[RMDB]
RNA sequence: GGGAACGACUCGAGUAGAGUCGAAAACUCGGUCAACCUCCUGAGUUCCUCUUCCUCCUCCUUGCUCAGGUUCUUCCCUCCGCCGCUCAGUUGCUUUCUCUUGUUCUUGAGGGCCUUCCUUCGUCGGUGAUCCUGCCUCUCCCUGUCGGUGAAUCCUACUAAAUAAAUAGUUCGCUAUUUAUUUAGUAAAAGAAACAACAACAACAAC
Reactivity to DMS in 0.01 (KOAc 150mM, MgCl2 10mM, bicine 150mM(pH8.5), 24C), signal-to-noise 2, nucleotides 027 to 156: c030u000c010g030g040u010c050a100a190c080c020u010c020c000u000g010a140g020u000u000c020c010u000c080u010u010c030c030u000c040c000u000c020c010u010u000g030c040u010c030a090g000g020u010u010c050u000u000c030c010c010u010c060c050g010c030c020g030c050u000c050a130g010u000u000g010c030u020u000u000c030u000c030u000u010g020u000u000c050u010u040g040a120g030g020g030c050c030u000u000c040c010u000u000c010g020u000c040g010g010u000g000a060u000c020c000u000g010c040c020u010c040u000c010c000c040u010g000u000c020g000g030u000g000a070a220u000c010c040u000
Reactivity to 2A3 in 0.01 (KOAc 150mM, MgCl2 10mM, bicine 150mM(pH8.5), 24C), signal-to-noise 2, nucleotides 027 to 156: c020u010c010g020g020u080c030a060a080c010c020u050c010c040u070g030a040g050u060u060c020c010u070c020u130u090c020c010u040c000c000u030c000c000u040u060g020c020u020c030a030g050g000u070u070c010u050u030c020c000c000u030c020c020g030c020c010g010c010u020c020a050g000u050u050g030c020u020u110u040c030u010c000u050u120g050u150u060c060u060u060g020a050g000g030g030c000c000u060u050c000c000u040u060c020g040u000c000g000g050u050g030a060u030c000c020u020g030c010c000u050c010u010c000c010c000u020g030u040c020g040g030u020g030a060a030u020c000c010u020

Description:
The record gives the reactivity of an RNA of 207 nucleotides to DMS and 2A3. For 2A3, 2,315 sequencing reads were counted. The data come from the RNA Mapping Database (RMDB), library VIROID. Values are in units of 0.01, from 0 to 300, in steps of 10. DMS adducts were read by reverse transcription with MarathonRT. The RNA was probed in 150 mM KOAc, 10 mM MgCl2 and 150 mM bicine (pH 8.5) at 24 C. The DMS profile rests on 8,852 reads.